[RMDB]
RNA sequence: GGGAACGACUCGAGUAGAGUCGAAAAGGCCGCUAGACGUACGCACUCGAUCCGUACGAUCGGCCCAGUGCGCGGAUCCACACACUGAUCAGUACAGUGCGCCACACAGGCGCCUGAUCGGAUCAGAUGUAGUCCUCUAGUUCGCUAGAGGACUACAAAAAGAAACAACAACAACAAC
Reactivity to 2A3 in 0.01 (KOAc 150mM, MgCl2 10mM, bicine 150mM(pH8.5), 24C), signal-to-noise 3, nucleotides 027 to 126: g020g010c020c010g000c150u110a030g050a160c010g040u030a000c030g020c060a100c080u160c100g140a210u000c040c000g050u040a030c030g090a150u030c020g000g020c000c020c000a050g040u060g070c100g000c040g050g020a020u050c050c000a020c010a000c000a010c130u000g010a010u000c000a020g090u160a220c000a020g050u120g260c010g000c030c000a080c000a020c010a130g000g000c000g010c000c000u030g040a060u030c000g030g000a000u010c000a000g020a050
Reactivity to DMS in 0.01 (KOAc 150mM, MgCl2 10mM, bicine 150mM(pH8.5), 24C), signal-to-noise 4, nucleotides 027 to 126: g010g000c000c010g030c150u000a050g010a240c050g000u000a040c010g050c120a050c150u000c160g020a080u000c110c030g010u000a050c000g010a100u000c010g000g000c050c030c060a080g020u000g020c040g020c050g000g000a110u000c020c040a140c130a090c210a100c000u010g000a030u000c010a040g040u000a300c010a020g000u000g040c010g000c000c000a110c160a140c300a150g010g000c030g010c000c000u000g010a280u000c010g000g000a040u000c010a030g010a190
The data come from the RNA Mapping Database (RMDB), library OK2TRN. Structure probing data (2A3 and DMS) for a 177-nucleotide construct. For 2A3, 3,078 sequencing reads were counted. For DMS the reverse transcriptase was MarathonRT. The reactions ran in a buffer of 150 mM KOAc, 10 mM MgCl2 and 150 mM bicine (pH 8.5), at 24 C.